[RMDB]
RNA sequence: GGGAACGACUCGAGUAGAGUCGAAAAAUUCAACUAUGCGUAACAUGAUGGACAGACUCUCCAUUUGUAUGACGUGGUGAUGGGGAGGUGGUGUUACAGGAGCAGAACACUCGGCUAGAUCGUUGAAUAUUGAGUGAGAUGGGCUGAAAUGGGCAGAGCGUCCGCUUAAAUUCGUUUAAGCGGACGCAAAAGAAACAACAACAACAAC
Reactivity to 2A3 in 0.01 (KOAc 150mM, MgCl2 10mM, bicine 150mM(pH8.5), 24C), signal-to-noise 1, nucleotides 027 to 156: a000u030u030c050a050a040c070u120a070u160g050c070g060u040a060a040c030a020u120g030a100u070g120g130a040c050a030g130a100c010u010c000u000c000c000a030u000u000u100g170u030a150u110g070a070c050g040u070g000g010u130g030a060u030g000g020g050g000a010g000g020u010g070g020u010g000u030u000a000c080a090g050g070a050g040c060a000g040a050a000c010a030c060u070c000g080g050c010u030a000g010a130u080c000g050u100u020g000a030a000u040a090u090u170g030a030g000u010g000a020g020a110u020g000g070g070c060u030g010a120a000a070u090g000g010g000c000a000g000a000
The record gives the reactivity of an RNA of 207 nucleotides to 2A3. The RNA was probed in 150 mM KOAc, 10 mM MgCl2 and 150 mM bicine (pH 8.5) at 24 C. It was measured as part of the RMDB library OK3TST. 2A3 adducts were read by reverse transcription with SuperScript II with manganese.